The record gives the reactivity of an RNA of 207 nucleotides to 2A3 and DMS. Values are in units of 0.01, from 0 to 300, in steps of 10. For 2A3, 4,133 sequencing reads were counted. The reactions ran in a buffer of 150 mM KOAc, 10 mM MgCl2 and 150 mM bicine (pH 8.5), at 24 C.
[RMDB]
RNA sequence: GGGAACGACUCGAGUAGAGUCGAAAAGAAGCACCGUACCUAUUUAGGUUUACGCUCCAAGAUCGGUGGAUAGCAGCCCUAUCAAUAUCUAGGAGAACUGUGCUAUGUUUAGAAGAUUAGGUAGUCUAUUACACAGCCAUGUUCGCAUGGCUGUGAAACAAUGCACUAUGUUCGCAUAGUGCAUUGUAAAAGAAACAACAACAACAAC
Reactivity to 2A3 in 0.01 (KOAc 150mM, MgCl2 10mM, bicine 150mM(pH8.5), 24C), signal-to-noise 6, nucleotides 027 to 156: g100a050a000g000c010a010c000c010g030u030a020c010c010u100a150u270u250u280a040g000g010u040u090u110a040c040g000c010u000c000c000a050a000g000a050u070c100g120g170u070g120g030a010u050a030g070c060a020g040c040c000c010u020a020u020c030a040a060u030a020u140c010u020a050g000g010a020g010a060a050c070u060g020u010g020c000u030a040u120g090u030u070u050a140g010a170a030g020a100u170u100a060g080g050u050a030g070u040c030u060a120u080u130a070c000a000c000a000g000c000c000a010u000g060u060u070c220g000c130a000u000g000g030c000u000g000u000g000a000a000
Reactivity to DMS in 0.01 (KOAc 150mM, MgCl2 10mM, bicine 150mM(pH8.5), 24C), signal-to-noise 4, nucleotides 027 to 156: g000a160a060g000c010a180c010c030g020u000a090c020c020u000a210u010u000u000a030g010g010u000u000u000a050c050g000c010u000c010c010a080a100g000a050u000c150g030g050u010g000g010a070u000a060g000c040a210g000c140c120c030u000a090u000c010a080a130u000a080u000c040u000a170g010g010a100g000a050a070c050u000g030u010g020c010u000a060u010g000u000u000u000a110g020a100a150g000a100u010u010a090g020g020u000a100g030u000c040u000a100u000u000a240c010a020c010a000g000c000c010a010u010g010u000u000c300g060c020a030u010g020g000c000u010g020u000g000a000a090